[RMDB]
RNA sequence: GGGAACGACUCGAGUAGAGUCGAAAACUGCAGUGGACCACUGUCAUCGAACGCACCUUCCAUGUGGAGACUCCUGAGGAGCGGUACGUGGGCUGUGGCGGCCAGGCCAGGCACUUGGGCAGCCCCAGCGCUUAGGAGGGACACGGGGAUGGCGGGAACCACUACUCCUAUUCGUAGGAGUAGUGGUAAAAGAAACAACAACAACAAC
Reactivity to 2A3 in 0.01 (KOAc 150mM, MgCl2 10mM, bicine 150mM(pH8.5), 24C), signal-to-noise 2, nucleotides 027 to 156: c030u070g040c010a000g000u020g070g090a180c010c030a010c070u040g040u110c050a160u070c100g050a120a060c030g010c010a040c020c050u050u000c030c020a060u110g060u150g050g040a100g050a070c030u010c000c020u020g070a040g010g080a110g020c030g050g080u180a140c060g030u300g020g020g000c040u010g010u050g200g060c000g070g000c030c040a100g070g100c040c010a020g050g000c020a020c100u200u190g070g030g030c000a000g010c000c020c000c000a000g020c000g010c010u010u030a020g000g020a030g000g000g050a000c010a020c020g020g000g000g000a000u000g010g000c010g010g020g040a030
Overview
Chemical mapping of a 207-nucleotide RNA with 2A3. Conditions: 150 mM KOAc, 10 mM MgCl2 and 150 mM bicine (pH 8.5), 24 C. 2A3 adducts were read by reverse transcription with SuperScript II with manganese. The data come from the RNA Mapping Database (RMDB), library OK3TST.